Overview
Structure probing data (2A3 and DMS) for a 177-nucleotide construct. 2A3 adducts were read by reverse transcription with SuperScript II with manganese. Conditions: 150 mM KOAc, 10 mM MgCl2 and 150 mM bicine (pH 8.5), 24 C.
RNA sequence: GGGAACGACUCGAGUAGAGUCGAAAAAGCGGCGCACGGAUCGGUACAGCGCGUACCGUCUCACAGCUGUGAUCGAGCGCGACGUGCGCUGGUACGCGCAGGAUCGCAGGCCAUAGCAGUACGUACCGUAACAACUGGGAUUCGUCCCAGUUGUUACAAAAGAAACAACAACAACAAC
Reactivity to 2A3 in 0.01 (KOAc 150mM, MgCl2 10mM, bicine 150mM(pH8.5), 24C), signal-to-noise 4, nucleotides 027 to 126: a000g050c020g000g010c010g020c020a010c050g040g000a080u100c020g020g020u030a030c040a060g070c070g000c050g130u000a010c000c010g050u050c020u050c030a100c030a070g140c070u160g040u030g030a060u070c090g070a030g080c040g000c030g070a190c070g040u070g020c000g010c010u000g020g040u070a020c010g010c000g000c010a020g050g070a000u010c020g010c040a020g150g000c010c000a070u130a050g010c060a020g050u080a040c050g030u020a040c040c020
Reactivity to DMS in 0.01 (KOAc 150mM, MgCl2 10mM, bicine 150mM(pH8.5), 24C), signal-to-noise 5, nucleotides 027 to 126: a070g010c060g010g010c030g020c030a100c100g020g000a070u000c020g000g000u010a020c030a190g030c110g010c110g000u000a020c010c000g010u000c080u000c050a050c120a180g000c090u000g020u000g010a030u010c100g020a180g000c050g010c030g010a120c110g010u000g000c030g000c030u010g010g010u000a040c040g030c010g010c010a130g000g010a040u000c020g010c110a070g010g020c030c070a110u000a070g010c060a070g020u000a060c060g000u000a130c070c060
DMS adducts were read by reverse transcription with MarathonRT.